[RMDB]
The record gives the reactivity of an RNA of 177 nucleotides to 2A3 and DMS. For DMS the reverse transcriptase was MarathonRT. The reactions ran in a buffer of 150 mM KOAc, 10 mM MgCl2 and 150 mM bicine (pH 8.5), at 24 C. High 2A3 reactivity points to a flexible backbone, as in loops and unpaired stretches. It was measured as part of the RMDB library TTRINS.
RNA sequence: GGGAACGACUCGAGUAGAGUCGAAAAGAUAUGGACAAGCUACCCACCUUACCCUCGCGAAGAACCUGCAUUAUAUCGGAAACGAUAUAAUGCAGGGGAGCGAGCGUAAGAGGCUUGUCCUAAGUCACGGUAUUACAUAGUUCGCUAUGUAAUACCGAAAAGAAACAACAACAACAAC
Reactivity to 2A3 in 0.01 (KOAc 150mM, MgCl2 10mM, bicine 150mM(pH8.5), 24C), signal-to-noise 4, nucleotides 027 to 126: g120a100u300a280u300g010g000a000c010a000a000g020c010u230a300c030c000c040a030c020c010u010u000a000c120c060c010u000c000g000c000g160a300a100g040a050a060c000c000u000g010c010a000u000u010a010u000a000u000c020g020g060a110a060a030c010g000a000u000a000u010a020a000u000g010c000a000g000g000g000g010a000g000c000g010a000g000c020g010u010a000a000g010a000g000g010c000u010u000g000u000c000c000u000a040a030g170u140c120a010
Reactivity to DMS in 0.01 (KOAc 150mM, MgCl2 10mM, bicine 150mM(pH8.5), 24C), signal-to-noise 4, nucleotides 027 to 126: g020a160u010a180u010g020g020a010c000a010a000g010c010u000a180c020c000c040a300c140c010u010u000a000c000c130c000u010c000g030c000g000a110a210g000a130a200c010c000u000g000c000a000u000u000a000u000a010u000c000g010g000a190a070a200c000g030a010u000a000u000a000a000u010g000c000a000g000g000g000g000a040g000c010g010a020g000c300g010u010a010a000g020a090g000g020c010u000u000g000u000c000c000u000a040a040g020u000c150a240